[RMDB]
RNA sequence: GGGAACGACUCGAGUAGAGUCGAAAAUGGUGUUAAGUGGAAUAAGUGGUUACAUAUACAUAUAUGUACAGGGGGCUACAUAUAUGUAUAUGCCCCCUCGCGUCAGUAUAAGUAGGUAUAAGGUGGACCGUAUCACGGAUUUCGAUCCGUGAUACGGAAAAGAAACAACAACAACAAC
Reactivity to DMS in 0.01 (KOAc 150mM, MgCl2 10mM, bicine 150mM(pH8.5), 24C), signal-to-noise 1, nucleotides 027 to 126: u020g030g000u030g000u050u010a000a130g050u030g150g150a100a140u030a080a100g000u030g000g000u010u030a140c010a000u000a010u000a020c030a070u000a060u000a000u030g000u010a010c080a090g080g050g000g000g040c120u010a000c060a000u000a010u040a050u000g010u010a000u000a000u040g050c040c000c000c020c000u000c040g010c130g000u020c090a130g000u010a030u030a010a070g010u030a030g040g020u040a040u000a100a040g010g000u000g020g050a300
Reactivity to 2A3 in 0.01 (KOAc 150mM, MgCl2 10mM, bicine 150mM(pH8.5), 24C), signal-to-noise 1, nucleotides 027 to 126: u090g000g040u020g000u040u110a070a100g040u060g030g050a020a010u020a130a090g030u020g090g000u090u060a000c000a000u010a000u000a010c010a000u060a000u000a000u030g030u000a020c060a080g090g000g030g060g010c000u000a010c010a010u020a010u020a000u000g020u020a000u020a000u020g000c000c000c000c000c000u010c000g000c020g030u060c000a000g040u020a080u010a230a100g000u070a060g030g050u060a120u000a200a000g060g000u070g020g000a040